The record gives the reactivity of an RNA of 177 nucleotides to DMS and 2A3.
The data come from the RNA Mapping Database (RMDB), library TTRDEL.
For 2A3 the reverse transcriptase was SuperScript II with manganese.
RNA sequence: GGGAACGACUCGAGUAGAGUCGAAAAGAUAUGGACGGCACCAAAGCGACGAUGUCGGAAACGACAUUAGCUUGGUGGCCGUCCUAAGUCAAAGGUUGUUUUGUAUGUUCGCAUACAAAACAACCAAGAUGAUGUCAUAGUUCGCUAUGACAUCAUCAAAAGAAACAACAACAACAAC
Reactivity to DMS in 0.01 (KOAc 150mM, MgCl2 10mM, bicine 150mM(pH8.5), 24C), signal-to-noise 8, nucleotides 027 to 126: g010a050u010a300u000g000g000a020c010g000g010c000a030c000c000a010a020a100g020c000g010a120c300g010a010u000g020u000c000g000g000a080a070a190c000g010a020c000a010u000u000a220g010c000u000u000g000g010u000g010g010c000c000g000u000c000c000u000a000a060g010u000c040a100a110a090g000g010u000u000g000u000u000u000u000g000u000a000u000g000u000u010c220g000c000a000u000a010c000a000a000a000a000c000a000a000c010c000a020a030
Reactivity to 2A3 in 0.01 (KOAc 150mM, MgCl2 10mM, bicine 150mM(pH8.5), 24C), signal-to-noise 6, nucleotides 027 to 126: g020a020u060a030u110g000g000a000c010g010g000c000a000c010c010a140a150a050g020c020g100a110c180g030a020u010g000u000c000g010g020a050a060a040c010g000a000c000a000u020u020a030g000c000u000u000g020g010u020g010g010c000c010g000u000c000c000u000a010a000g000u010c030a030a030a070g000g000u010u000g000u000u010u000u000g010u000a010u000g040u030u070c270g000c140a000u000a000c000a000a000a000a000c000a000a000c000c000a000a000
Reactivities are given for positions 27 through 126.